[RMDB]
RNA sequence: GGGAACGACUCGAGUAGAGUCGAAAAAUUGACAGCAAGUGGAAACUGAUACAAAAAAUGUAAUGCCAUUUACAGUUGUUCCAAAGAAUGUGAAAAAGAAUGCUAACAAAACAUAUGCAAUAUUAAACAUUACUUACGUUUUCGAACGUAAGUAAUGAAAAGAAACAACAACAACAAC
Reactivity to DMS in 0.01 (KOAc 150mM, MgCl2 10mM, bicine 150mM(pH8.5), 24C), signal-to-noise 7, nucleotides 027 to 126: a090u000u000g010a050c040a050g010c050a050a060g040u000g010g000a110a070a080c070u010g000a110u000a110c130a010a040a140a060a060a060u000g010u000a060a090u000g030c110c020a020u000u010u000a070c030a060g020u000u000g010u000u000c010c020a080a080a080g000a070a040u010g010u000g010a060a040a060a060a080g010a070a080u010g010c040u000a070a100c140a050a060a050a090c120a070u010a050u010g000c050a040a050u010a090u000u000a080a060a150
Reactivity to 2A3 in 0.01 (KOAc 150mM, MgCl2 10mM, bicine 150mM(pH8.5), 24C), signal-to-noise 4, nucleotides 027 to 126: a000u050u090g030a010c010a010g020c030a030a090g100u020g050g030a020a040a020c020u040g030a030u110a150c120a040a130a020a030a020a020u050g010u070a140a060u120g110c030c010a010u010u010u020a020c000a010g000u010u020g100u130u000c010c000a050a000a000g080a060a040u100g020u050g100a030a100a010a020a000g080a050a020u040g020c000u010a040a040c040a050a120a000a010c030a030u130a040u130g000c010a030a060u070a090u210u180a130a070a000
About this RNA: An RNA of 177 nucleotides, treated with DMS and 2A3 and read out base by base. Source: RMDB library OK2TST, as collected in RNAgym. Values cover nucleotides 27 to 126. For 2A3 the reverse transcriptase was SuperScript II with manganese.